[RMDB]
RNA sequence: GGGAACGACUCGAGUAGAGUCGAAAACGGUAGCCGGGCAGUUUGACUGGGGCGGUACGCGCUUGAAAAGAUAUCGAGCGCGCCCUAAGCCUAUCUCAGCCGAGUCAGAGACUCGGCGAAGAGUGCAUUUUACAGGUGCUUUCGAGCACCUGUAAAAAAAAGAAACAACAACAACAAC
Reactivity to 2A3 in 0.01 (KOAc 150mM, MgCl2 10mM, bicine 150mM(pH8.5), 24C), signal-to-noise 2, nucleotides 027 to 126: c040g010g030u040a050g040c030c030g080g000g000c010a050g000u020u050u180g060a050c020u060g020g000g010g040c020g000g000u080a020c020g010c000g000c010u000u000g010a000a080a030a020g230a130u290a050u270c000g000a000g000c020g000c000g000c000c000c000u020a060a020g000c000c000u140a180u090c000u020c000a000g000c000c000g000a000g030u020c030a040g060a000g000a220c000u010c000g000g000c000g000a020a000g000a000g000u080g020c040a020
Reactivity to DMS in 0.01 (KOAc 150mM, MgCl2 10mM, bicine 150mM(pH8.5), 24C), signal-to-noise 2, nucleotides 027 to 126: c050g000g000u020a050g000c010c030g000g030g000c040a060g000u040u050u020g010a090c050u000g030g000g000g000c050g040g000u000a150c110g010c000g010c030u020u020g010a030a050a190a130g000a190u040a060u000c010g000a000g000c000g000c060g040c220c010c000u010a130a090g000c010c010u030a080u010c000u000c070a290g010c000c000g000a000g010u000c000a200g010a300g000a020c000u000c000g000g020c000g000a070a060g010a050g000u000g040c020a160
This 177-nucleotide RNA was probed chemically with 2A3 and DMS. The 2A3 profile rests on 925 reads. Reactivities are given for positions 27 through 126. The RNA was probed in 150 mM KOAc, 10 mM MgCl2 and 150 mM bicine (pH 8.5) at 24 C. Source: RMDB library RFM100, as collected in RNAgym. DMS (dimethyl sulfate) methylates the pairing face of unpaired adenines and cytosines.